RNA sequence: GGGAACGACUCGAGUAGAGUCGAAAAGUCUAAUUUGGCCAAGAGCAUUUUUAGUAUAUCCAAAGGUUUGACGGGAGAAGAUUGGGAUAAAUCAAUAGGAGGUUUCAAAAGAACUGGAUCUGCUAUAUCGAAUAACCCUGUUCGCAGGGUUAUUCGAAAAAGAAACAACAACAACAAC
Reactivity to DMS in 0.01 (KOAc 150mM, MgCl2 10mM, bicine 150mM(pH8.5), 24C), signal-to-noise 2, nucleotides 027 to 126: g020u000c020u000a070a100u000u010u000g000g000c050c030a030a060g000a160g020c090a030u000u030u010u030u000a000g000u000a110u010a020u030c030c030a010a090a090g020g000u000u020u010g000a040c110g000g000g000a080g020a060a040g000a040u010u000g020g030g010a170u000a040a050a100u030c120a010a040u010a000g000g000a050g000g000u000u000u000c030a030a010a130a100g000a040a120c100u000g000g020a030u010c000u020g000c030u010a060u000a060
Reactivity to 2A3 in 0.01 (KOAc 150mM, MgCl2 10mM, bicine 150mM(pH8.5), 24C), signal-to-noise 3, nucleotides 027 to 126: g000u000c020u060a060a110u040u110u160g080g000c000c070a170a050g140a010g030c040a050u040u060u030u080u060a080g060u010a020u030a020u140c040c020a070a070a060g120g000u070u020u030g010a010c060g020g050g000a070g020a120a040g080a040u130u100g050g000g020a060u070a090a060a030u030c050a030a000u020a110g070g060a020g060g000u070u130u030c090a110a100a000a000g060a080a010c060u040g000g010a040u010c010u010g030c000u000a000u050a020